RNA sequence: GGGAACGACUCGAGUAGAGUCGAAAAGCCACAUAUCCCGUGACAUUGCGAAAGGAAGGCUGGCGGUAGGUAGUCCUGGGCGGCGACAGCCUUGGACUGCGGCGUAAAGGUGUACCUGGGGCCGUUAUAACGCGGUAACAGUUCGCUGUUACCGCAACGAGAUAAAGAAGUUCGCUUCUUUAUCUCGAAAAGAAACAACAACAACAAC
Reactivity to DMS in 0.01 (KOAc 150mM, MgCl2 10mM, bicine 150mM(pH8.5), 24C), signal-to-noise 2, nucleotides 027 to 156: g020c020c000a030c070a180u010a150u020c000c000c020g020u000g000a080c040a110u010u010g020c000g000a100a140a140g020g000a060a060g010g020c040u000g020g020c010g020g000u000a050g020g040u000a020g010u010c010c040u010g010g020g020c020g000g030c060g030a090c110a230g010c010c000u000u000g020g000a050c000u000g040c020g000g000c010g020u010a060a100a080g010g000u000g000u000a040c040c030u030g030g020g000g020c010c020g000u000u000a090u000a130a110c150g010c000g000g000u000a020a020c010a010g030u020u020c240g030c010u010g010u000u000a010c000c020g000c010a000a010
Reactivity to 2A3 in 0.01 (KOAc 150mM, MgCl2 10mM, bicine 150mM(pH8.5), 24C), signal-to-noise 3, nucleotides 027 to 156: g030c030c010a080c020a040u170a070u040c000c010c020g030u030g050a060c090a130u100u130g010c030g030a080a040a030g030g010a050a040g020g020c010u010g040g010c020g000g010u030a030g000g040u010a000g000u010c000c030u020g010g000g000c010g010g010c040g040a060c070a020g010c000c000u000u000g000g000a000c010u000g000c000g040g000c020g000u060a040a080a050g000g000u070g030u060a070c010c020u030g010g000g050g000c010c010g010u030u040a170u040a150a040c120g000c000g000g000u000a000a000c010a010g020u070u080c170g030c120u000g000u010u010a010c010c000g000c000a000a000
About this RNA:
Chemical mapping of a 207-nucleotide RNA with DMS and 2A3. The RNA was probed in 150 mM KOAc, 10 mM MgCl2 and 150 mM bicine (pH 8.5) at 24 C. It was measured as part of the RMDB library M2RFPK. DMS adducts were read by reverse transcription with MarathonRT. For DMS, 6,055 sequencing reads were counted.